[RMDB]
RNA sequence: GGGAACGACUCGAGUAGAGUCGAAAAUUUGACAUCUGCAACUAUAAGGCUAAGGUUGCUGGUAUUGGAAAAUACUACAAGACUAAUACUUGUAGGUUUGUAGAAUUAGAUGACCAAGGGCAUCAUUUCACUUAAGGUAGUUCGCUACCUUAAGUGAAAAAGAAACAACAACAACAAC
Reactivity to DMS in 0.01 (KOAc 150mM, MgCl2 10mM, bicine 150mM(pH8.5), 24C), signal-to-noise 1, nucleotides 027 to 126: u000u000u020g030a110c200a100u040c030u010g000c000a030a020c000u000a010u000a020a060g000g000c170u000a100a170g000g020u000u000g000c270u030g050g000u000a000u000u000g030g020a070a040a000a020u000a020c000u000a060c070a020a170g000a230c030u000a080a110u010a050c030u000u000g010u000a000g000g030u000u000u000g000u000a010g010a050a140u000u040a090g000a020u000g000a240c000c030a050a080g010g000g000c100a060u010c070a070u000u000
Reactivity to 2A3 in 0.01 (KOAc 150mM, MgCl2 10mM, bicine 150mM(pH8.5), 24C), signal-to-noise 1, nucleotides 027 to 126: u070u080u110g090a040c070a060u000c010u020g000c000a010a000c000u010a000u010a110a000g060g030c020u010a010a100g090g030u010u010g060c070u010g120g000u010a000u030u090g090g060a220a050a010a010u030a040c010u020a000c000a050a020g020a050c020u060a040a080u050a120c020u020u010g010u000a000g030g090u040u030u000g030u000a010g010a010a000u090u020a030g010a050u020g040a060c010c080a060a080g110g010g000c040a000u050c000a000u030u000